[RMDB]
RNA sequence: GGGAACGACUCGAGUAGAGUCGAAAACGAUGAGGGGAGAAGAGAAGUGGGCAGGUGGGUCGAAGACGCCCGCCCCAUGGCGGACGCCCGUCGCCUGUUUGCAUGCGGGGGUCAGACCCCCUUACCGGAUAUUACGAGGGUUCGCCCUCGUAAUAUCAAAAGAAACAACAACAACAAC
Reactivity to DMS in 0.01 (KOAc 150mM, MgCl2 10mM, bicine 150mM(pH8.5), 24C), signal-to-noise 3, nucleotides 027 to 126: c090g020a090u010g000a080g000g010g000g000a100g000a100a070g000a090g010a080a070g010u000g000g020g030c160a030g010g030u010g030g000g000u000c040g000a120a140g010a030c070g020c000c010c000g000c010c180c150c080a070u000g010g000c000g010g000a020c070g000c090c110c150g000u000c040g010c010c010u000g000u000u010u010g020c160a060u000g030c040g000g000g000g010g010u000c050a120g000a230c020c000c010c010c010u000u000a040c050c060g010
Reactivity to 2A3 in 0.01 (KOAc 150mM, MgCl2 10mM, bicine 150mM(pH8.5), 24C), signal-to-noise 2, nucleotides 027 to 126: c020g040a070u060g010a070g010g020g070g000a080g020a090a020g060a020g000a150a030g040u090g020g000g040c050a000g050g050u140g010g010g000u060c040g020a180a080g030a010c060g260c090c020c030g000c010c050c020c000a060u060g020g000c050g070g000a020c080g070c070c100c020g040u030c000g010c000c010u090g040u100u270u180g100c110a040u100g020c020g000g000g000g010g000u000c000a000g040a070c000c000c000c000c000u020u030a050c020c000g000
Conditions: 150 mM KOAc, 10 mM MgCl2 and 150 mM bicine (pH 8.5), 24 C. The record gives the reactivity of an RNA of 177 nucleotides to DMS and 2A3. It was measured as part of the RMDB library OK2TRN. DMS adducts were read by reverse transcription with MarathonRT. Values cover nucleotides 27 to 126.